[RMDB]
RNA sequence: GGGAACGACUCGAGUAGAGUCGAAAAAGCGUAGCGCUACGCCGCUACGCAAGGCGCAUUUGAACUGUAUUGUACGCCUUGCAUAAAGCAAAAGUACUAAAAAAACGUGCCGUUACGACGGCACGAAAAAACAUCCAUUGGUUCGCCAAUGGAUGAAGAAUUAAAGUGUCUUCGGACACUUUAAUUCAAAAGAAACAACAACAACAAC
Reactivity to 2A3 in 0.01 (KOAc 150mM, MgCl2 10mM, bicine 150mM(pH8.5), 24C), signal-to-noise 4, nucleotides 027 to 156: a000g020c020g010u010a000g000c010g020c040u130a110c130g120c130c000g000c020u000a000c000g020c000a000a000g000g000c000g000c040a070u070u070u280g130a170a060c100u090g040u240a100u180u090g030u030a020c010g000c000c020u000u020g000c010a050u100a220a120a060g010c010a010a030a050a000g040u060a050c070u190a060a060a050a020a010a010a020c010g000u000g000c010c010g000u000u040a060c220g030a000c000g060g010c000a000c000g000a010a000a000a000a000a010c000a000u000c000c000a000u000u000g030g000u030u010c120g020c070c000a000a000u000g000g000a000u000g000a000a020
Reactivity to DMS in 0.01 (KOAc 150mM, MgCl2 10mM, bicine 150mM(pH8.5), 24C), signal-to-noise 2, nucleotides 027 to 156: a080g000c010g020u000a000g020c060g030c020u010a080c230g020c110c030g000c030u000a000c070g030c010a010a010g040g000c010g000c020a040u000u010u010g000a100a180c080u000g030u020a300u010u010g020u000a040c030g020c040c010u010u000g040c010a130u000a070a110a090g000c050a000a040a030a160g040u000a170c120u060a000a010a070a070a060a080a130c000g050u000g020c000c010g040u040u000a080c200g030a150c000g000g000c020a000c010g010a000a030a070a110a030a020c000a000u000c010c000a040u000u000g010g020u010u000c300g050c010c000a000a020u000g010g010a000u000g000a020a080